Record summary:
Chemical mapping of a 177-nucleotide RNA with 2A3 and DMS. It was measured as part of the RMDB library M2PK90. For DMS the reverse transcriptase was MarathonRT. The RNA was probed in 150 mM KOAc, 10 mM MgCl2 and 150 mM bicine (pH 8.5) at 24 C.
RNA sequence: GGGAACGACUCGAGUAGAGUCGAAAAUUUAAGAGCGUAGAUGUCUCUGUCACGAUACGAGUAAGUGACUCUCGUGUUCUACUGACGAAUGAGACAGAGACAUUUAUGCUCAGUGUCAGUCAAGGAAAGGCCAUAAUCAAUUCGUUGAUUAUGGCCUAAAAGAAACAACAACAACAAC
Reactivity to 2A3 in 0.01 (KOAc 150mM, MgCl2 10mM, bicine 150mM(pH8.5), 24C), signal-to-noise 1, nucleotides 027 to 126: u120u150u080a140a050g010a010g050c010g020u000a000g010a000u010g000u000c000u000c010u020g000u000c010a000c130g080a010u020a050c000g050a020g020u100a080a080g090u110g270a060c030u000c000u000c040g030u030g040u070u040c100u090a110c040u090g130a070c060g070a090a080u110g030a070g000a060c010a010g000a000g000a010c000a010u000u020u000a000u000g000c000u000c000a000g020u010g000u000c050a120g040u050c050a050a050g090g000a200a060
Reactivity to DMS in 0.01 (KOAc 150mM, MgCl2 10mM, bicine 150mM(pH8.5), 24C), signal-to-noise 2, nucleotides 027 to 126: u000u010u000a120a130g010a030g020c000g020u000a010g000a010u000g000u000c010u000c010u010g000u000c000a070c140g000a070u000a030c030g010a040g000u000a060a100g020u010g000a200c210u000c120u010c080g000u000g010u000u010c020u010a150c150u010g000a070c190g010a090a060u010g000a070g000a000c000a010g000a010g000a000c010a010u000u000u010a010u000g010c000u000c000a030g010u000g010u000c080a070g000u010c050a070a070g010g030a110a060